Record summary: Conditions: 150 mM KOAc, 10 mM MgCl2 and 150 mM bicine (pH 8.5), 24 C. Structure probing data (DMS and 2A3) for a 177-nucleotide construct.
RNA sequence: GGGAACGACUCGAGUAGAGUCGAAAAUUCCCCUAUUUCGAUAGGGGAACACCUGCCGGCGGCUCGCAGUUCCGACUUCCUCCUCCUCUGAGUCAAAGGGCGAUAGGCCUCGGUUCGCCGAGGCCAAGCCCAAGAAUGAAUUCGUUCAUUCUUGGGCAAAAGAAACAACAACAACAAC
Reactivity to DMS in 0.01 (KOAc 150mM, MgCl2 10mM, bicine 150mM(pH8.5), 24C), signal-to-noise 8, nucleotides 027 to 126: u000u000c000c000c000c000u000a010u000u000u010c150g010a030u000a000g010g010g010g010a010a020c080a090c040c010u000g020c050c030g010g010c090g010g000c030u000c050g000c080a090g000u000u000c030c020g000a100c070u000u000c020c010u000c010c010u000c020c010u000c040u000g000a100g020u000c060a040a110a160g010g010g010c070g000a140u010a100g010g020c000c000u000c000g010g000u000u010c210g020c000c000g010a010g000g010c000c000a010a040
Reactivity to 2A3 in 0.01 (KOAc 150mM, MgCl2 10mM, bicine 150mM(pH8.5), 24C), signal-to-noise 3, nucleotides 027 to 126: u020u020c010c010c010c010u010a020u040u100u090c190g080a010u010a010g020g000g010g010a010a010c020a040c010c010u020g060c020c020g060g030c020g020g000c020u030c030g020c060a020g030u090u070c040c050g090a110c060u100u040c000c010u010c000c000u010c000c000u020c010u050g010a010g010u000c020a070a090a040g030g010g000c030g030a030u080a110g010g000c000c000u000c000g000g010u030u030c170g010c050c000g000a000g000g000c000c000a000a010

Overview:
2A3 is a SHAPE reagent: it acylates the 2'-hydroxyl of flexible nucleotides of all four kinds.